[RMDB]
RNA sequence: GGGAACGACUCGAGUAGAGUCGAAAAGCGCGCGAUUUAGUAACAAGAGGACACACACUUUGGACAGUCACAGUCGAUACCGAACGGAGUUUUCACUGUAACUAUCGCCCGUCUCACUUAUCGGCGAAGUGGCGCUGUAGUUCGCUACAGCGCCACUAAAAGAAACAACAACAACAAC
Reactivity to 2A3 in 0.01 (KOAc 150mM, MgCl2 10mM, bicine 150mM(pH8.5), 24C), signal-to-noise 2, nucleotides 027 to 126: g050c000g000c000g000c030g050a000u000u040u270a110g000u050a060a060c040a070a010g050a150g080g050a010c000a000c000a010c010a000c040u010u010u100g060g000a020c010a030g010u030c000a070c040a070g090u070c010g010a000u030a080c030c030g050a090a000c090g000g110a100g020u030u010u060u120c030a070c050u030g030u110a060a000c030u010a000u090c020g010c000c040c000g090u030c000u000c090a050c030u120u150a130u210c040g040g050c110g060a070